[RMDB]
RNA sequence: GGGAACGACUCGAGUAGAGUCGAAAACUUGCGGUUCACCACCGACUACGACAUGGCGGCCGAUUUCGCCGACGUGCAUUUCCUGGGGGUCGGCACGCCGCAAAAGAUAGGCGAAUAUGGCGCCGACACAACGUAUAAGCUUCGGCUUAUACGUUGUAAAAGAAACAACAACAACAAC
Reactivity to 2A3 in 0.01 (KOAc 150mM, MgCl2 10mM, bicine 150mM(pH8.5), 24C), signal-to-noise 9, nucleotides 027 to 126: c020u020u060g020c010g000g050u110u110c060a030c060c000a010c000c020g050a040c030u120a060c060g140a020c040a090u090g030g000c010g010g060c070c050g180a190u070u090u190c110g020c020c000g030a030c020g060u080g020c040a120u050u090u110c020c010u080g050g020g020g000g000u010c000g000g000c050a020c060g000c000c000g000c000a030a040a000a000g120a080u220a090g010g000c020g020a100a030u200a140u200g130g000c010g000c010c000g070a000c010
Reactivity to DMS in 0.01 (KOAc 150mM, MgCl2 10mM, bicine 150mM(pH8.5), 24C), signal-to-noise 5, nucleotides 027 to 126: c080u010u010g000c020g020g020u000u010c160a100c100c070a190c030c000g010a060c040u000a110c130g010a100c170a040u020g000g000c000g000g000c040c160g030a180u010u020u000c100g020c030c000g000a040c070g000u010g000c130a090u010u000u010c030c020u000g000g020g010g010g010u010c020g010g000c010a130c110g040c010c000g020c080a040a040a090a110g010a110u010a070g000g010c000g020a100a080u020a170u020g010g010c020g010c000c000g000a120c140